[RMDB]
RNA sequence: GGGAACGACUCGAGUAGAGUCGAAAACGGGGUACGAGGGAUUGCUUAAGAACUAAGGUUAAGCAGUUAAAUACCCAUAGACGACCUUAGAUAGAAGGACAGAGAUCCUUCUGUCCCUCGUUGUCUAGGUACUCGUAGAUUUCGAUCUAUGAGUACCAAAAGAAACAACAACAACAAC
Reactivity to DMS in 0.01 (KOAc 150mM, MgCl2 10mM, bicine 150mM(pH8.5), 24C), signal-to-noise 2, nucleotides 027 to 126: c090g000g000g000g020u000a020c070g010a080g000g020g010a010u020u020g000c080u010u030a060a060g000a130a200c200u030a060a040g010g000u000u010a110a050g030c020a050g000u000u000a090a110a100u020a020c010c010c030a150u010a070g010a120c150g020a010c000c020u010u000a020g000a100u010a000g000a000a000g000g000a010c000a300g000a300g000a300u000c000c030u000u000c000u000g000u000c000c010c020u000c060g000u000u000g000u000c010u000a020
Reactivity to 2A3 in 0.01 (KOAc 150mM, MgCl2 10mM, bicine 150mM(pH8.5), 24C), signal-to-noise 6, nucleotides 027 to 126: c040g030g000g000g020u050a010c010g000a010g010g040g000a020u020u050g030c040u130u060a100a030g050a140a050c040u040a050a020g050g020u020u020a060a010g050c020a010g020u030u050a080a090a030u160a090c010c000c000a010u060a020g070a020c050g010a010c000c000u010u010a010g000a010u060a000g040a030a010g010g010a000c070a060g300a040g010a300u000c000c000u000u000c000u000g000u000c010c000c000u010c020g010u000u020g010u000c010u000a020
Chemical mapping of a 177-nucleotide RNA with DMS and 2A3. The RNA was probed in 150 mM KOAc, 10 mM MgCl2 and 150 mM bicine (pH 8.5) at 24 C. The 2A3 profile rests on 9,607 reads. Values cover nucleotides 27 to 126. Source: RMDB library OK1LIB, as collected in RNAgym. The DMS profile rests on 4,045 reads.